[RMDB]
RNA sequence: GGGAACGACUCGAGUAGAGUCGAAAACGGCCAGGACGUGACCGUUGAGAUCUUCGAAGGUAUCAACUUCGUUGACGUCACCGGCACCACCAAGGGUAAGGGCUACGCCGGCGCUAUGAAGCGCCACGCUCCCUAGCCGAUUCGUCGGCUAGGGAGCAAAAGAAACAACAACAACAAC
Reactivity to DMS in 0.01 (KOAc 150mM, MgCl2 10mM, bicine 150mM(pH8.5), 24C), signal-to-noise 1, nucleotides 027 to 126: c160g030g000c040c040a100g000g000a170c170g000u000g000a120c000c020g000u000u000g000a070g000a150u000c000u000u000c120g010a060a030g020g000u000a110u000c260a150a140c010u000u000c010g070u000u000g000a040c010g020u000c000a070c000c030g000g000c000a070c040c170a130c030c000a160a170g020g020g040u000a060a150g000g030g030c030u000a100c120g010c130c070g010g010c020g000c000u000a090u030g020a200a100g010c000g000c000c030a020c160
Reactivity to 2A3 in 0.01 (KOAc 150mM, MgCl2 10mM, bicine 150mM(pH8.5), 24C), signal-to-noise 2, nucleotides 027 to 126: c030g000g000c020c010a050g040g020a030c090g030u010g060a260c000c020g000u000u010g110a040g050a130u000c010u000u010c010g050a030a020g040g030u260a140u250c080a050a080c010u010u030c000g000u000u020g030a020c030g120u040c010a020c050c000g030g000c000a010c000c000a010c030c030a050a070g080g000g030u100a030a100g060g010g000c010u080a060c080g030c060c050g000g000c010g020c010u040a040u300g230a130a070g000c010g000c020c010a010c010